Overview
Structure probing data (2A3 and DMS) for a 177-nucleotide construct. The 2A3 profile rests on 3,827 reads. 2A3 adducts were read by reverse transcription with SuperScript II with manganese. Source: RMDB library TTRDES, as collected in RNAgym. The reactions ran in a buffer of 150 mM KOAc, 10 mM MgCl2 and 150 mM bicine (pH 8.5), at 24 C.
RNA sequence: GGGAACGACUCGAGUAGAGUCGAAAAGAUAUGGACGAUAUGAUAGUGAUGACCGUUAUCGGAAACGAUAACGCAAGCUGCAUAUUCGUCCUAAGUCAAAACACAUUGCUCUUCGGAGCAAUGUGAACAGGUGUUCAAUCUUCGGAUUGAACACCUGAAAAGAAACAACAACAACAAC
Reactivity to 2A3 in 0.01 (KOAc 150mM, MgCl2 10mM, bicine 150mM(pH8.5), 24C), signal-to-noise 2, nucleotides 027 to 126: g010a010u030a000u120g020g000a020c020g010a000u000a010u000g170a150u230a220g080u060g190a300u130g010a090c000c040g000u040u010a000u010c000g000g000a020a010a020c020g000a000u000a000a000c040g000c040a110a300g010c030u170g020c020a010u030a030u190u230c000g000u000c000c000u000a000a010g000u000c010a000a090a010a130c020a000c010a000u000u000g020c000u000c000u030u160c300g040g000a020g000c000a000a000u000g000u030g000a030a000
Reactivity to DMS in 0.01 (KOAc 150mM, MgCl2 10mM, bicine 150mM(pH8.5), 24C), signal-to-noise 2, nucleotides 027 to 126: g020a010u000a170u020g000g000a010c000g000a020u000a000u010g000a230u000a040g040u000g020a080u020g020a170c300c010g000u010u000a010u000c000g000g010a030a020a120c000g010a010u000a000a000c000g000c010a030a060g010c020u000g010c010a010u000a010u020u010c010g010u000c000c000u000a010a090g000u000c010a060a130a080a120c030a000c000a020u000u000g010c000u000c000u000u050c260g050g010a000g000c000a000a000u000g000u000g000a100a130